[RMDB]
RNA sequence: GGGAACGACUCGAGUAGAGUCGAAAAGCGUACUACCCAUGGCAAACUGGAGCUCUGUGACGCAAUUCCCAAAUAGGAAUUGCGGAGCAGAGCGUUGAAAGUUUGAACUACCAUGGGUAUCGCAAAAGGACGCCAAUUGUUCGCAAUUGGCGUCCAACAUGCUAAUCUCGUUCGCGAGAUUAGCAUGAAAAGAAACAACAACAACAAC
Reactivity to DMS in 0.01 (KOAc 150mM, MgCl2 10mM, bicine 150mM(pH8.5), 24C), signal-to-noise 2, nucleotides 027 to 156: g030c000g020u020a030c100u010a050c000c010c000a040u000g020g010c010a030a020a030c010u030g020g000a300g050c000u000c000u010g020u000g010a300c010g030c020a020a000u000u000c000c000c020a070a180a190u010a030g030g020a000a000u010u000g000c000g030g010a300g010c000a010g010a010g000c020g000u000u000g000a200a180a080g010u000u000u000g000a150a180c020u000a130c000c000a010u000g050g010g020u000a000u000c010g020c000a060a040a090a220g030g000a010c000g030c000c010a010a020u000u000g000u020u010c240g040c040a030a030u010u000g010g000c000g000u000c000c000a000a050
Reactivity to 2A3 in 0.01 (KOAc 150mM, MgCl2 10mM, bicine 150mM(pH8.5), 24C), signal-to-noise 2, nucleotides 027 to 156: g000c000g010u050a090c090u000a000c000c000c000a000u000g020g000c000a000a000a000c010u010g020g000a010g000c000u000c010u010g020u060g000a020c000g000c000a000a000u000u010c010c010c030a120a150a160u140a120g010g000a010a010u030u010g000c000g010g000a010g020c020a000g010a000g020c000g000u010u000g000a020a000a000g000u000u000u000g010a070a090c100u180a050c100c000a010u000g000g000g000u010a000u010c000g000c000a050a050a000a000g000g000a000c000g000c010c010a000a020u030u020g020u030u160c240g040c120a010a010u000u000g010g000c000g000u000c000c000a000a000